[RMDB]
RNA sequence: GGGAACGACUCGAGUAGAGUCGAAAAUAAGCAAAAGACAACCACCUUUCCCGCUGACAAUAGCGUUAUCCCUCUGCACUUCGGUAAUAUGAGGGCACAGUAAAUCCCGCAAGGAUGAGAAUGUUAUUAAACAGUUACAGCUUCGGCUGUAACUGAACUUUGUGAUCAUCUUCGGAUGAUCACAAAGAAAAGAAACAACAACAACAAC
Reactivity to DMS in 0.01 (KOAc 150mM, MgCl2 10mM, bicine 150mM(pH8.5), 24C), signal-to-noise 1, nucleotides 027 to 156: u000a070a060g030c020a050a160a100a110g000a150c070a080a110c050c070a230c080c020u010u000u000c020c000c000g040c160u000g040a120c150a040a050u000a040g010c000g000u000u000a120u000c000c000c020u030c040u000g000c090a010c000u000u000c060g010g020u000a020a150u000a120u000g000a040g010g000g000c070a010c070a070g030u000a100a110a040u000c000c010c050g070c120a110a210g000g000a110u000g000a130g000a100a090u000g000u000u000a070u000u000a090a040a100c020a020g020u000u000a000c010a010g050c000u000u000c300g000g010c000u000g020u000a000a000c000u000g010a040a090
Reactivity to 2A3 in 0.01 (KOAc 150mM, MgCl2 10mM, bicine 150mM(pH8.5), 24C), signal-to-noise 2, nucleotides 027 to 156: u120a040a010g080c020a080a000a080a000g090a070c070a070a000c020c080a040c020c030u020u050u020c020c020c040g030c070u080g000a010c090a220a220u050a080g090c060g010u060u150a080u110c000c000c000u000c000u000g000c020a010c010u080u090c240g090g000u040a050a000u150a120u300g000a010g000g000g020c020a000c000a060g040u060a000a050a010u020c000c010c000g020c110a060a050g040g060a070u030g000a000g050a040a090u090g070u050u050a050u030u140a110a160a010c000a000g000u010u000a000c000a000g020c000u040u020c120g160g000c000u000g000u000a000a000c000u000g010a000a000